[RMDB]
Description: An RNA of 177 nucleotides, treated with DMS and 2A3 and read out base by base. DMS adducts were read by reverse transcription with MarathonRT. It was measured as part of the RMDB library RFMREP. Conditions: 150 mM KOAc, 10 mM MgCl2 and 150 mM bicine (pH 8.5), 24 C.

RNA sequence: GGGAACGACUCGAGUAGAGUCGAAAAAUCCCCUGAAAAUAGAUUGCUUAGGACGUGAGUAGAAGACUUGUUUGAUGGGGUAGGGAUGUAAGCUUCGAGGUUUUUUUUCCGAGUUGUUUAGUCCGCUAUAGUAUACAUAGUUCGCUAUGUAUACUAUAAAAGAAACAACAACAACAAC
Reactivity to DMS in 0.01 (KOAc 150mM, MgCl2 10mM, bicine 150mM(pH8.5), 24C), signal-to-noise 5, nucleotides 027 to 126: a150u010c030c010c000c100u000g000a090a040a070a090u010a060g010a100u000u010g010c020u010u000a080g010g000a050c060g020u000g000a100g010u010a080g010a070a070g010a080c060u000u000g010u000u000u010g010a150u000g010g010g010g010u000a050g000g000g010a030u000g000u000a060a060g000c020u000u000c040g010a180g010g010u020u010u000u020u010u010u000u000c010c000g020a220g010u000u000g010u000u000u010a170g000u000c010c010g010c300u000
Reactivity to 2A3 in 0.01 (KOAc 150mM, MgCl2 10mM, bicine 150mM(pH8.5), 24C), signal-to-noise 2, nucleotides 027 to 126: a000u020c030c000c000c030u060g070a040a000a030a030u120a050g100a050u050u160g020c040u040u040a050g050g050a050c030g080u040g090a060g000u040a020g030a150a010g040a070c020u070u060g090u120u110u120g070a030u040g000g040g000g040u000a040g020g060g020a000u020g040u060a060a000g030c010u060u060c070g040a040g060g000u100u050u060u000u000u030u150u000c030c030g030a110g050u020u030g040u000u050u040a030g040u000c020c010g000c010u000